Background
The record gives the reactivity of an RNA of 177 nucleotides to DMS and 2A3. The RNA was probed in 150 mM KOAc, 10 mM MgCl2 and 150 mM bicine (pH 8.5) at 24 C. For DMS, 37,600 sequencing reads were counted.
[RMDB]
RNA sequence: GGGAACGACUCGAGUAGAGUCGAAAAACGGGCAGUGGCGAUGGCAACGCGGCAGCCGCAGGGUCGACUUCUUCGCAGCCGCAACAGACGGGUCACGGGCAAAGAGGGGCUCUCGUUCUGUUGGAAGAUAUAGGAUAUAUUUCGAUAUAUCCUAUAUAAAAGAAACAACAACAACAAC
Reactivity to DMS in 0.01 (KOAc 150mM, MgCl2 10mM, bicine 150mM(pH8.5), 24C), signal-to-noise 9, nucleotides 027 to 126: a100c080g000g000g020c040a060g030u010g010g000c050g010a080u020g000g000c050a070a100c110g000c040g010g030c050a100g000c070c040g020c080a090g000g000g020u010c050g010a080c090u010u010c030u000u010c060g010c060a090g010c040c040g000c030a070a040c070a060g000a060c050g000g000g010u010c050a060c070g010g000g010c100a040a060a100g010a110g010g000g000g010c030u010c020u010c030g010u020u000c030u000g000u010u000g000g000a090a060g000
Reactivity to 2A3 in 0.01 (KOAc 150mM, MgCl2 10mM, bicine 150mM(pH8.5), 24C), signal-to-noise 9, nucleotides 027 to 126: a000c040g010g030g000c030a050g030u050g070g020c030g050a090u080g040g010c030a060a030c060g010c000g050g000c020a020g040c030c020g000c030a030g030g030g020u060c020g030a070c010u070u030c000u030u030c060g010c040a020g030c010c020g020c010a010a010c010a020g050a010c020g020g020g000u060c060a020c080g010g050g000c060a070a070a010g060a060g000g010g010g000c010u000c010u020c040g040u110u030c020u030g020u020u010g030g020a060a030g050